Notes:
Structure probing data (2A3) for a 207-nucleotide construct.

RNA sequence: GGGAACGACUCGAGUAGAGUCGAAAACGACUUGUUUCGACAAGUCGAAAAAACCUUUGUGUCAGUCGAUGAACUACGCUCCGGAUGGACCCAUUGGGUCCAUCGGGAGCGCAUCGAAGCUGACACUCUGGUAAAAAGGAUGGCUUCGGCCAUCCAAGAAUGAGACAGACUUCGGUCUGUCUCAUUCAAAAGAAACAACAACAACAAC
Reactivity to 2A3 in 0.01 (KOAc 150mM, MgCl2 10mM, bicine 150mM(pH8.5), 24C), signal-to-noise 1, nucleotides 027 to 156: c010g000a000c000u000u000g010u040u210u160c070g080a010c000a000a000g020u000c000g100a070a010a000a000a000a000c000c000u000u000u000g000u000g010u000c000a000g030u020c000g010a010u020g030a130a110c090u090a050c300g000c000u020c030c020g110g000a000u000g010g000a000c000c000c180a300u250u300g020g030g000u040c000c000a000u000c000g000g000g010a000g000c000g000c000a000u000c000g020a090a060g200c000u010g000a000c000a000c000u000c000u000g020g000u070a140a120a020a000a020g000g000a000u010g000g000c050u050u110c300g190g000c000c000a000u000c000c000a000a010
Overview
It was measured as part of the RMDB library RNAMAK.